Structure probing data (2A3) for a 207-nucleotide construct. It was measured as part of the RMDB library OK3TST. High 2A3 reactivity points to a flexible backbone, as in loops and unpaired stretches.
RNA sequence: GGGAACGACUCGAGUAGAGUCGAAAAGGCAGGGGAAUGAGCGUCCACUGGGUGCCUGCUGCAUCUGGGCCAUGCUAGGCCCUGCCCAGCCCCACCUGCUCCUUACACAUGUGUGGGGUGGCUGCUAGUCCUCCCUGACUGGUGAAGGGACCAAGGCUGUUGAGUUGUGAUUCGUCACAACUCAACAAAAAGAAACAACAACAACAAC
Reactivity to 2A3 in 0.01 (KOAc 150mM, MgCl2 10mM, bicine 150mM(pH8.5), 24C), signal-to-noise 2, nucleotides 027 to 156: g020g000c000a010g030g010g030g010a030a200u100g020a080g040c020g000u020c080c160a120c080u090g010g040g010u000g010c010c080u270g090c250u250g010c040a000u000c040u050g000g070g000c100c030a120u210g030c000u050a030g050g020c010c010c000u000g000c000c020c000a080g040c000c000c000c000a030c010c010u040g000c000u010c080c000u090u090a040c040a040c000a040u300g030u000g050u060g050g050g000g050u000g020g000c040u200g040c080u140a010g080u110c010c000u080c000c020c000u090g110a100c020u100g040g000u010g020a080a020g010g000g000a020c030c040a070a010g070g000c030